The record gives the reactivity of an RNA of 177 nucleotides to 2A3 and DMS. Reactivities are rounded to 0.1 and cut off at 0 and 3. The RNA was probed in 150 mM KOAc, 10 mM MgCl2 and 150 mM bicine (pH 8.5) at 24 C. The data come from the RNA Mapping Database (RMDB), library OK1LIB.
[RMDB]
RNA sequence: GGGAACGACUCGAGUAGAGUCGAAAAGAUUGAGAUCAGACGUUAUUUACAUCAGCAUCCAGAAUUAUCUUUUCAUGAAGAUGAAACGGCGAAAUACAUCGCUGAAUUUUACAAAGGUAAAGAUGUGUCUAUGAACGACGUUCGCGUCGUUCAUAGAAAAAGAAACAACAACAACAAC
Reactivity to 2A3 in 0.01 (KOAc 150mM, MgCl2 10mM, bicine 150mM(pH8.5), 24C), signal-to-noise 5, nucleotides 027 to 126: g090a090u270u290g030a060g000a050u080c100a050g030a130c030g050u130u090a150u100u160u080a090c020a050u050c030a020g010c000a030u060c050c010a000g140a130a090u110u030a020u080c000u030u040u040u060c100a090u290g090a110a030g030a060u090g040a020a020a040c010g000g000c000g020a000a070a000u250a110c090a070u030c030g000c000u020g040a020a060u020u010u040u000a100c040a020a120a050g040g000u060a070a020a020g020a020u080g050u020g040
Reactivity to DMS in 0.01 (KOAc 150mM, MgCl2 10mM, bicine 150mM(pH8.5), 24C), signal-to-noise 2, nucleotides 027 to 126: g010a060u000u020g000a130g040a070u020c100a040g040a060c130g000u020u010a060u000u040u010a020c030a040u000c070a100g000c050a080u000c000c010a210g000a130a100u000u010a020u000c000u000u000u010u030c070a020u000g010a020a110g000a030u020g000a020a030a220c060g000g020c020g000a040a020a090u030a070c300a070u000c000g010c000u000g020a000a060u000u010u010u050a050c160a040a080a080g050g020u020a010a090a020g000a010u010g000u000g000